This 177-nucleotide RNA was probed chemically with 2A3 and DMS. For 2A3, 1,582 sequencing reads were counted. The data come from the RNA Mapping Database (RMDB), library OK2TST. Conditions: 150 mM KOAc, 10 mM MgCl2 and 150 mM bicine (pH 8.5), 24 C.
RNA sequence: GGGAACGACUCGAGUAGAGUCGAAAAUGAAUUUCCAGGAGGCAGCCCGAGUCCCUGGGGAGAGGGUCAUCGUGGCUCUCGUCGGUGCCUUCCACCUCUGGACAGGCAACCGGUGGGAGAGGACGCCCUUCGGGUGUAUGUUCGCAUACACCCGAAGAAAAGAAACAACAACAACAAC
Reactivity to 2A3 in 0.01 (KOAc 150mM, MgCl2 10mM, bicine 150mM(pH8.5), 24C), signal-to-noise 1, nucleotides 027 to 126: u070g050a010a120u070u090u090c010c000a000g050g010a090g030g000c050a020g070c000c030c030g010a010g040u000c000c000c000u020g000g000g010g030a090g020a030g000g030g010u060c060a070u100c120g040u050g160g000c000u000c010u000c000g030u000c000g000g000u010g000c000c030u000u000c000c020a070c040c150u130c140u130g000g010a020c010a070g000g000c060a120a240c010c000g000g000u020g000g000g000a030g000a010g050g010a020c020g060c000c020
Reactivity to DMS in 0.01 (KOAc 150mM, MgCl2 10mM, bicine 150mM(pH8.5), 24C), signal-to-noise 2, nucleotides 027 to 126: u000g010a160a140u000u010u000c010c020a050g000g020a130g000g000c020a060g010c020c020c010g010a100g010u000c010c000c000u000g020g000g000g010a100g010a040g020g000g010u000c080a110u020c060g000u010g000g000c010u000c000u010c000g010u010c010g000g010u000g010c010c000u000u000c000c000a090c300c150u030c180u000g000g010a040c300a010g010g000c010a010a020c000c010g010g010u000g000g000g000a030g010a110g010g000a060c180g000c060c020